The record gives the reactivity of an RNA of 177 nucleotides to 2A3 and DMS. 2A3 adducts were read by reverse transcription with SuperScript II with manganese. The RNA was probed in 150 mM KOAc, 10 mM MgCl2 and 150 mM bicine (pH 8.5) at 24 C. For DMS the reverse transcriptase was MarathonRT.

[RMDB]
RNA sequence: GGGAACGACUCGAGUAGAGUCGAAAAAUCGAUGUCGAUGGUGCGCUGCGGUCGUGCGAUGGAGGAGGUGGGCUUGACCACCACGCGGAAGACGAUCUCCUCCCCGGUGGAGAUGCCGCCGAGGAUCGGCAGAAUGAUCCUUCGGGAUCAUUCUGCCAAAAGAAACAACAACAACAAC
Reactivity to 2A3 in 0.01 (KOAc 150mM, MgCl2 10mM, bicine 150mM(pH8.5), 24C), signal-to-noise 1, nucleotides 027 to 126: a000u120c050g040a050u110g060u110c050g010a110u080g000g040u080g000c050g030c020u070g040c010g040g040u100c030g000u040g040c040g040a030u110g030g010a040g030g050a040g010g030u060g050g000g030c040u050u130g060a030c010c000a010c030c000a040c030g000c030g010g050a030a030g040a000c030g030a040u000c030u010c010c050u050c020c020c000c040g090g000u000g010g020a160g010a080u080g110c000c010g000c050c010g030a040g010g000a050u180c050
Reactivity to DMS in 0.01 (KOAc 150mM, MgCl2 10mM, bicine 150mM(pH8.5), 24C), signal-to-noise 1, nucleotides 027 to 126: a070u000c030g010a150u010g010u010c020g000a070u000g000g010u000g000c030g010c060u000g020c020g040g030u000c070g030u000g000c010g010a050u000g010g020a000g010g000a050g000g040u000g000g000g000c140u010u010g020a120c020c030a070c070c050a060c120g020c060g000g010a100a020g000a130c120g000a060u020c010u000c010c040u000c040c020c050c010g020g020u020g010g000a260g000a100u000g010c020c000g050c040c050g010a040g010g000a080u040c110